[RMDB]
RNA sequence: GGGAACGACUCGAGUAGAGUCGAAAACGGACGUAGUCCAGCACCGGCGCGUACGAGGCGGCGCGCAGGACUUGGCGGACAGCUGGCGGCAGGUACAAGCCGCCGCCCGUCCGGUGCGCAUUAUACAGCAUGCUCGCAUGUUCGCAUGCGAGCAUGCAAAAGAAACAACAACAACAAC
Reactivity to 2A3 in 0.01 (KOAc 150mM, MgCl2 10mM, bicine 150mM(pH8.5), 24C), signal-to-noise 2, nucleotides 027 to 126: c060g070g050a020c050g200u200a100g000u070c000c010a060g000c000a000c010c000g040g000c080g000c040g080u120a180c000g030a050g010g070c050g000g000c000g020c000g000c000a010g020g000a010c010u090u030g010g000c000g040g050a160c070a070g160c080u160g030g000c000g010g000c000a080g120g020u120a040c020a120a000g000c000c000g000c010c000g000c010c000c000g040u010c000c030g040g000u030g000c030g000c040a040u150u090a090u130a230c100a020
Description: An RNA of 177 nucleotides, treated with 2A3 and read out base by base. The RNA was probed in 150 mM KOAc, 10 mM MgCl2 and 150 mM bicine (pH 8.5) at 24 C.